Structure probing data (2A3 and DMS) for a 177-nucleotide construct.
RNA sequence: GGGAACGACUCGAGUAGAGUCGAAAAUCGGCUGGUUCGCGACGCAGACCCCCGGCCGUGGAUGCUCGCUCGGGCUCGGGAUCCGCCCAGGUAGCGGCCGGACCCUGGUCCCGCGCCCAGGCCCUCCCCUAUGGUGAUAGUUCGCUAUCACCAUAGGAAAAGAAACAACAACAACAAC
Reactivity to 2A3 in 0.01 (KOAc 150mM, MgCl2 10mM, bicine 150mM(pH8.5), 24C), signal-to-noise 5, nucleotides 027 to 126: u120c020g030g010c010u030g020g040u110u140c040g010c030g050a060c050g010c060a030g020a160c000c000c000c010c010g010g000c000c010g020u030g050g030a080u120g030c030u030c090g040c020u040c050g000g010g000c010u020c010g010g000g020a050u030c020c020g030c020c010c000a040g090g090u090a020g040c070g060g000c050c020g010g010a020c030c020c000u010g010g010u050c000c000c000g000c010g000c000c010c010a030g030g020c000c010c010u040c000c010
Reactivity to DMS in 0.01 (KOAc 150mM, MgCl2 10mM, bicine 150mM(pH8.5), 24C), signal-to-noise 4, nucleotides 027 to 126: u000c070g000g000c030u000g010g010u020u010c060g000c030g000a090c140g020c080a120g000a140c040c000c100c050c030g000g000c010c010g010u010g010g020a110u000g020c070u000c080g010c020u010c060g010g010g000c060u000c070g000g020g010a060u020c020c060g000c080c000c020a150g020g000u030a110g020c040g010g000c090c030g010g000a040c040c030c040u000g000g000u000c020c040c020g010c070g000c300c030c030a080g010g000c000c000c030u000c020c050